RNA sequence: GGGAACGACUCGAGUAGAGUCGAAAAGAUAUGGACCGAGAAGUGAACUACUGAGAAGUAUCGGAAACGAUACGGAUCAGCACUUCGUUUGACGUCCUAAGUCGUGGUCUUCGGUUCGCCGAAGAAACCUAUUCUUCGACUUCGGUCGAAGAAUAGGAAAAGAAACAACAACAACAAC
Reactivity to 2A3 in 0.01 (KOAc 150mM, MgCl2 10mM, bicine 150mM(pH8.5), 24C), signal-to-noise 2, nucleotides 027 to 126: g020a030u020a020u060g010g000a000c060c080g160a160g010a280a010g020u000g020a050a030c100u300a060c010u300g000a010g000a040a020g010u000a010u000c000g000g030a000a040a010c000g010a000u020a010c000g010g000a010u000c010a000g000c000a000c000u000u000c010g010u060u140u300g110a090c110g000u000c000c000u000a020a010g020u020c050g040u120g080g050u000c000u000u000c020g000g070u040u130c300g030c040c000g000a010a010g000a030a000a000
Reactivity to DMS in 0.01 (KOAc 150mM, MgCl2 10mM, bicine 150mM(pH8.5), 24C), signal-to-noise 3, nucleotides 027 to 126: g000a010u020a110u020g000g000a020c010c140g020a090g000a010a000g000u000g010a060a070c030u010a300c020u000g010a010g000a300a250g010u000a000u000c000g010g010a050a020a050c010g000a010u000a010c000g000g000a300u000c000a000g010c030a000c010u000u000c000g000u000u000u020g000a150c300g000u000c000c000u000a010a050g010u000c000g020u000g000g020u000c000u000u000c000g000g000u000u010c190g050c010c000g010a000a010g010a010a050a060